[RMDB]
RNA sequence: GGGAACGACUCGAGUAGAGUCGAAAAAGGAGAUCCCAUCUUGCACACUGUGCUAAUUUGAGAUUCUCAUGCCUCCUACUUGGAGAGAUCUGGACUAGAAGUCAGGGCAUCUGACUCUGCCAGCCACAAAACGUACAAGGCUUCGGCCUUGUACGAAGUCUGUAGUUCACUUCGGUGAACUACAGACAAAAGAAACAACAACAACAAC
Reactivity to 2A3 in 0.01 (KOAc 150mM, MgCl2 10mM, bicine 150mM(pH8.5), 24C), signal-to-noise 1, nucleotides 027 to 156: a000g070g000a020g020a010u010c000c000c000a000u010c010u010u010g000c000a050c050a110c300u300g000u020g020c020u070a100a150u010u000u060g010a010g000a110u300u030c000u030c030a050u160g040c000c000u010c000c000u140a300c130u090u160g060g000a040g010a030g010a050u050c000u050g000g010a040c010u050a080g020a110a000g050u010c000a020g030g080g080c120a250u130c100u010g000a000c000u000c000u000g000c010c000a000g040c050c000a110c010a000a130a130a000c010g000u000a000c000a000a000g000g000c000u090u080c190g010g030c000c000u030u000g000u000a000c000g000a000a000